[RMDB]
RNA sequence: GGGAACGACUCGAGUAGAGUCGAAAAUCUGGCCGUCGUCCAGUGCGCGGGCUGAGAGUCUCGACGGCCCCUGGCAAGUGUCGAGUGGUGGCCUUCUCGGAUGGCAUGGUGACGUCAGCGUAGUGUGGAAAGCGUAACGAUUCGUCGUUACGCUUUCAAAAGAAACAACAACAACAAC
Reactivity to DMS in 0.01 (KOAc 150mM, MgCl2 10mM, bicine 150mM(pH8.5), 24C), signal-to-noise 3, nucleotides 027 to 126: u000c020u030g010g030c020c040g020u000c010g030u010c020c020a300g010u000g000c080g020c110g000g000g020c010u010g010a110g000a150g000u010c050u000c030g000a020c030g020g010c010c010c080c060u000g020g020c040a120a160g000u000g030u000c010g010a070g030u000g000g030u010g010g010c040c040u020u000c030u000c050g000g010a100u010g010g000c030a020u000g000g030u010g000a050c060g010u000c020a040g000c060g020u000a070g030u010g010u010g010
Reactivity to 2A3 in 0.01 (KOAc 150mM, MgCl2 10mM, bicine 150mM(pH8.5), 24C), signal-to-noise 2, nucleotides 027 to 126: u050c010u000g000g020c030c020g030u050c020g030u000c020c010a060g080u060g050c180g000c050g030g100g000c010u030g070a070g020a010g250u050c010u020c070g020a000c010g040g000c000c000c000c000u040g000g010c050a150a150g070u040g020u220c020g010a030g020u080g050g060u060g040g000c050c000u040u030c060u020c030g090g020a070u050g030g000c010a020u020g010g050u130g030a010c000g010u000c020a000g000c030g050u130a080g090u090g120u100g230

Source: RMDB library OK2TST, as collected in RNAgym.
The record gives the reactivity of an RNA of 177 nucleotides to DMS and 2A3.
High DMS reactivity at an A or C suggests that its Watson-Crick edge is free.
The 2A3 profile rests on 2,066 reads.
2A3 adducts were read by reverse transcription with SuperScript II with manganese.